Overview:
This 177-nucleotide RNA was probed chemically with 2A3 and DMS. The RNA was probed in 150 mM KOAc, 10 mM MgCl2 and 150 mM bicine (pH 8.5) at 24 C. For 2A3, 673 sequencing reads were counted.
[RMDB]
RNA sequence: GGGAACGACUCGAGUAGAGUCGAAAAUGCGGAGAACCGCCGCCAAUGGCGAUGAGAUAGUCCGCGCCGCUUUGGGUAAAGACCUUAAGCCCUUCCUGGACAACGGAAAUCGUAGGAUUAGGGAUCACACUGGUGACCUCUUCGGAGGUCACCAGUGAAAAGAAACAACAACAACAAC
Reactivity to 2A3 in 0.01 (KOAc 150mM, MgCl2 10mM, bicine 150mM(pH8.5), 24C), signal-to-noise 1, nucleotides 027 to 126: u280g010c000g020g030a080g000a100a110c000c000g060c000c000g000c050c020a160a120u250g000g000c000g030a000u030g030a110g110a230u220a000g020u000c010c010g000c020g000c000c050g000c000u050u120u020g000g000g000u030a050a090a000g160a040c000c000u010u020a020a000g000c000c000c000u050u000c000c050u050g030g080a060c020a160a070c090g060g030a110a000a000u300c020g050u060a030g000g150a040u040u080a010g000g000g000a000u040c000a000
Reactivity to DMS in 0.01 (KOAc 150mM, MgCl2 10mM, bicine 150mM(pH8.5), 24C), signal-to-noise 1, nucleotides 027 to 126: u080g030c000g030g010a050g010a200a050c120c000g000c000c030g000c130c080a030a200u020g000g000c010g020a000u000g000a070g060a110u000a240g000u000c030c050g020c060g000c010c070g030c040u000u000u030g070g000g020u000a190a030a200g000a100c030c000u000u000a000a190g010c000c170c150u000u050c000c000u030g000g000a030c070a080a050c100g000g000a100a060a080u000c030g000u000a080g000g020a080u020u030a050g010g000g030a190u000c100a200